[RMDB]
This 177-nucleotide RNA was probed chemically with 2A3 and DMS. As a SHAPE reagent, 2A3 marks flexible, mostly unpaired nucleotides at the ribose 2'-OH. The data come from the RNA Mapping Database (RMDB), library OK2TRN. Conditions: 150 mM KOAc, 10 mM MgCl2 and 150 mM bicine (pH 8.5), 24 C.
RNA sequence: GGGAACGACUCGAGUAGAGUCGAAAAGGCACAUUUUACGAGACGUCAGUAUUAGUGAAUAUGCACCUGAGAUAUCCAAGCACAACACCAACGCGGAUAGUGUCAAAGCCUCAGCAAAUGUACGCACGUUGUGUUCAAUAUUCGUAUUGAACACAACAAAAGAAACAACAACAACAAC
Reactivity to 2A3 in 0.01 (KOAc 150mM, MgCl2 10mM, bicine 150mM(pH8.5), 24C), signal-to-noise 7, nucleotides 027 to 126: g040g010c020a010c010a050u020u070u070u160a060c080g010a030g020a070c040g050u110c070a050g030u040a100u130u120a040g030u010g070a060a040u130a050u150g020c020a040c030c020u040g030a030g010a060u080a030u030c030c010a020a020g020c020a030c010a080a090c020a020c050c010a070a060c060g000c010g100g010a040u040a080g050u040g010u050c010a050a040a050g020c010c000u020c020a020g000c030a040a080a080u150g030u090a040c070g020c040a030c100
Reactivity to DMS in 0.01 (KOAc 150mM, MgCl2 10mM, bicine 150mM(pH8.5), 24C), signal-to-noise 8, nucleotides 027 to 126: g010g010c020a060c030a060u000u000u000u010a060c080g010a140g000a060c060g010u010c140a100g010u000a050u000u000a100g010u000g010a050a050u000a060u000g010c050a070c060c030u000g000a090g030a110u010a060u010c040c040a080a120g010c050a050c080a040a060c090a060c060c050a060a070c110g010c070g010g000a070u000a050g010u000g000u010c070a050a070a090g000c040c010u000c050a050g010c110a020a050a080u000g010u000a050c120g020c120a090c240